[RMDB]
RNA sequence: GGGAACGACUCGAGUAGAGUCGAAAAGGAGGCUUCGGCCUCCGUUACGCGUACUACGGGAAAGGGAGCGAAGAACUAUACUGACUUCGUCCCAAAUAGGACGAAGAUGUAUAGGGAGCUCCUAACACGUAUCGCUAUUGUGCAGCUUCGGCUGCAAAGUACGAGAUAGGUUCGCCUAUCUCGUACUAAAAGAAACAACAACAACAAC
Reactivity to DMS in 0.01 (KOAc 150mM, MgCl2 10mM, bicine 150mM(pH8.5), 24C), signal-to-noise 1, nucleotides 027 to 156: g020g000a000g020g040c000u030u010c170g060g000c000c000u000c000c000g020u000u000a040c110g000c000g050u010a110c120u000a060c050g000g010g020a040a240a230g060g010g030a000g000c010g000a040a140g000a090a130c000u000a000u000a050c060u010g000a300c160u000u000c000g010u000c010c000c020a050a120a090u010a060g010g010a040c000g010a040a030g020a300u000g000u000a030u000a030g000g050g030a210g010c000u000c010c010u010a030a180c010a010c000g040u020a070u000c050g030c050u010a170u010u000g010u010g020c000a020g060c010u000u000c300g090g000c000u000g000c010a040a000
Reactivity to 2A3 in 0.01 (KOAc 150mM, MgCl2 10mM, bicine 150mM(pH8.5), 24C), signal-to-noise 2, nucleotides 027 to 156: g000g000a000g030g020c000u000u070c140g140g000c030c000u020c000c000g000u000u050a000c050g000c000g030u050a090c050u000a000c020g000g000g090a160a260a080g050g030g000a000g000c040g150a240a030g020a150a030c020u020a000u000a040c030u080g300a120c000u060u030c000g000u000c010c010c000a090a100a040u240a000g000g000a020c000g000a000a000g000a010u030g000u000a000u000a000g000g000g000a000g000c000u000c000c000u000a000a000c030a020c000g000u020a000u300c000g000c000u020a050u110u300g180u070g000c010a000g000c000u070u140c160g100g000c000u020g000c030a030a000

An RNA of 207 nucleotides, treated with DMS and 2A3 and read out base by base. The DMS profile rests on 2,483 reads. It was measured as part of the RMDB library RNAMAK. DMS adducts were read by reverse transcription with MarathonRT. In probing experiments dimethyl sulfate is read out at A N1 and C N3, which are open when not base-paired. The reactions ran in a buffer of 150 mM KOAc, 10 mM MgCl2 and 150 mM bicine (pH 8.5), at 24 C. For 2A3 the reverse transcriptase was SuperScript II with manganese.